[RMDB]
RNA sequence: GGGAACGACUCGAGUAGAGUCGAAAAGAUAUGGAACGGCCUGGGAGUAUGCACGUCGGAAACGACGUGUUUCGAUACAUCGAUCAGGACCGUUCCUAAGUCAAACGCAGUCGUUCGCGACUGCGAAGUUGUUAGACGAGUUCGCUCGUCUAACAACAAAAGAAACAACAACAACAAC
Reactivity to DMS in 0.01 (KOAc 150mM, MgCl2 10mM, bicine 150mM(pH8.5), 24C), signal-to-noise 3, nucleotides 027 to 126: g000a040u000a050u000g000g010a040a010c000g020g000c000c000u000g000g000g000a000g040u000a010u000g000c010a010c000g000u020c010g000g000a010a000a050c000g030a000c000g020u000g000u000u010u000c260g020a240u000a010c040a300u000c190g000a030u000c010a010g030g010a220c010c000g000u010u000c000c000u010a000a100g000u000c010a110a140a240c040g000c000a010g000u000c000g030u000u020c260g020c010g010a000c010u000g000c010g000a020a030
Reactivity to 2A3 in 0.01 (KOAc 150mM, MgCl2 10mM, bicine 150mM(pH8.5), 24C), signal-to-noise 1, nucleotides 027 to 126: g000a000u000a020u060g000g000a030a000c020g000g000c010c000u050g040g000g010a040g070u050a050u160g010c020a000c010g000u000c020g010g000a000a030a000c000g000a000c000g000u020g000u010u020u040c020g040a020u030a110c020a090u300c040g040a030u010c000a010g010g040a040c000c000g000u000u000c000c000u010a000a000g010u000c000a110a010a080c020g000c010a000g000u000c000g030u110u120c300g020c020g200a000c000u000g000c020g000a030a000
The record gives the reactivity of an RNA of 177 nucleotides to DMS and 2A3. DMS adducts were read by reverse transcription with MarathonRT. The DMS profile rests on 2,667 reads. 2A3 adducts were read by reverse transcription with SuperScript II with manganese.